[RMDB]
RNA sequence: GGGAACGACUCGAGUAGAGUCGAAAAAGCGGCGGCAUACGUGCCGCCGCAAUCCUCCUGUCCUUCAUUCCACCGGAGUCUGUCUUAUGCCAACCAGAUUUCAGUGGAGUGAAGCUCAGGAGGCAAAACCUCUUUAAAGUUUCGACUUUAAAGAGGUAAAAGAAACAACAACAACAAC
Reactivity to 2A3 in 0.01 (KOAc 150mM, MgCl2 10mM, bicine 150mM(pH8.5), 24C), signal-to-noise 3, nucleotides 027 to 126: a000g010c000g020g000c010g020g000c040a060u100a090c240g180u060g000c000c000g030c000c000g000c000a010a010u010c000c000u000c000c000u000g010u020c000c000u000u000c000a000u020u000c000c000a000c010c010g000g020a000g010u010c000u010g100u010c040u140u230a190u300g140c070c060a020a040c020c000a010g000a000u000u020u000c000a000g000u000g000g000a000g000u010g000a000a000g000c010u000c000a000g000g000a000g000g000c000a020a010a010